Source: RMDB library OK2TRN, as collected in RNAgym. This 177-nucleotide RNA was probed chemically with 2A3 and DMS. For 2A3 the reverse transcriptase was SuperScript II with manganese. DMS adducts were read by reverse transcription with MarathonRT. The reactions ran in a buffer of 150 mM KOAc, 10 mM MgCl2 and 150 mM bicine (pH 8.5), at 24 C. The 2A3 profile rests on 771 reads.

RNA sequence: GGGAACGACUCGAGUAGAGUCGAAAACUCCUGGAUCAGCUUGAUAUGACACCGAUGCCGGAGGAAGCGGAGAAUUUUGACCCACCAGGCCACUAUAAACUCCUUUCGGACCAGCUUAAACAGUUCACUAGUACUAGGACUUCGGUCCUAGUACUAGAAAAGAAACAACAACAACAAC
Reactivity to 2A3 in 0.01 (KOAc 150mM, MgCl2 10mM, bicine 150mM(pH8.5), 24C), signal-to-noise 1, nucleotides 027 to 126: c000u000c000c030u080g030g060a060u070c030a020g110c000u060u130g060a020u110a110u190g090a050c060a050c050c060g030a040u160g070c000c000g030g000a020g000g100a000a000g110c000g010g070a050g090a100a100u040u050u130u190g080a090c020c020c010a000c000c000a010g050g060c020c020a020c000u100a080u120a090a140a050c000u000c050c000u070u110u020c030g020g000a040c000c040a010g030c000u030u060a030a190a030c020a040g000u130u090c050a050
Reactivity to DMS in 0.01 (KOAc 150mM, MgCl2 10mM, bicine 150mM(pH8.5), 24C), signal-to-noise 2, nucleotides 027 to 126: c100u000c020c020u000g030g020a050u020c030a110g010c080u000u000g010a120u010a060u020g020a140c140a120c040c030g010a080u010g010c010c030g000g020a070g010g000a120a090g040c060g010g010a080g030a120a080u010u000u010u010g000a080c060c020c010a110c140c090a150g010g020c010c030a020c060u010a100u010a050a100a070c100u000c030c040u020u000u000c060g020g000a100c050c020a070g000c040u040u000a060a040a030c170a070g010u000u010c120a200